[RMDB]
RNA sequence: GGGAACGACUCGAGUAGAGUCGAAAAGACACGAGUUCCCGGAACAGACUCUCUCAACCGCCAAGUUUUGAAGGGACAAAAGUCCAAGUGCGCCUCUGCACAAAAGGCGGAACAAAACAAAAGCAAACAGUUACAUUAUCUUCGGAUAAUGUAACUGAAAAGAAACAACAACAACAAC
Reactivity to 2A3 in 0.01 (KOAc 150mM, MgCl2 10mM, bicine 150mM(pH8.5), 24C), signal-to-noise 3, nucleotides 027 to 126: g030a000c040a010c120g080a070g040u000u020c030c020c000g010g030a070a030c030a020g040a090c010u010c000u000c000u000c040a050a120c010c010g000c000c010a080a060g010u040u020u100u110g120a100a070g070g030g010a010c010a020a300a030a040g000u000c030c000a080a070g020u040g040c010g000c010c040u110c100u200g040c060a010c000a080a080a000a000g000g000c000g000g010a020a020c030a000a030a000a000c020a010a110a010a000g040c000a020a040a040
Reactivity to DMS in 0.01 (KOAc 150mM, MgCl2 10mM, bicine 150mM(pH8.5), 24C), signal-to-noise 3, nucleotides 027 to 126: g020a090c060a090c060g000a150g010u000u000c000c010c000g020g020a090a140c070a130g000a070c030u010c030u000c030u000c040a200a110c180c090g000c020c010a080a170g020u000u000u000u020g000a110a110g000g000g000a010c000a100a050a090a130g010u000c000c010a050a150g020u020g010c030g020c050c010u000c070u000g000c130a070c150a070a030a040a050g010g020c000g010g030a100a100c020a030a040a020a030c080a030a020a120a100g000c060a110a080a150